[RMDB]
RNA sequence: GGGAACGACUCGAGUAGAGUCGAAAAGAUAUGGACCGUAUGUAGACAUGACUACACGUCGGAAACGACGUGGGUCAACAGCUAUUUACGGUCCUAAGUCAAAAUCGGCAUCGUUCGCGAUGCCGAACAGAACCAAUGCGUUCGCGCAUUGGUUCUGAAAAGAAACAACAACAACAAC
Reactivity to DMS in 0.01 (KOAc 150mM, MgCl2 10mM, bicine 150mM(pH8.5), 24C), signal-to-noise 1, nucleotides 027 to 126: g000a030u000a300u000g000g000a020c000c010g010u010a010u010g020u010a000g000a080c240a300u020g000a000c000u000a100c010a000c040g040u010c000g010g000a050a140a090c000g040a000c000g070u000g010g010g000u000c010a010a040c300a100g010c000u000a000u030u000u000a000c010g000g000u000c000c000u000a010a160g030u000c010a120a070a170a220u010c000g000g010c010a000u000c000g030u010u010c300g000c010g030a000u000g000c000c000g040a000a040
Reactivity to 2A3 in 0.01 (KOAc 150mM, MgCl2 10mM, bicine 150mM(pH8.5), 24C), signal-to-noise 1, nucleotides 027 to 126: g020a010u050a000u100g000g000a010c000c000g030u020a030u080g010u020a010g090a130c140a300u230g010a010c080u300a300c050a010c000g000u000c000g010g000a030a000a010c000g000a000c000g010u000g000g010g030u010c010a010a040c080a030g160c000u020a010u020u020u020a000c000g000g010u010c000c000u010a000a000g010u000c010a020a040a010a300u090c010g010g000c010a000u010c000g030u050u070c160g030c000g080a040u000g000c000c010g000a020a000
Source: RMDB library TTRDES, as collected in RNAgym. Chemical mapping of a 177-nucleotide RNA with DMS and 2A3. The 2A3 profile rests on 2,037 reads. Conditions: 150 mM KOAc, 10 mM MgCl2 and 150 mM bicine (pH 8.5), 24 C.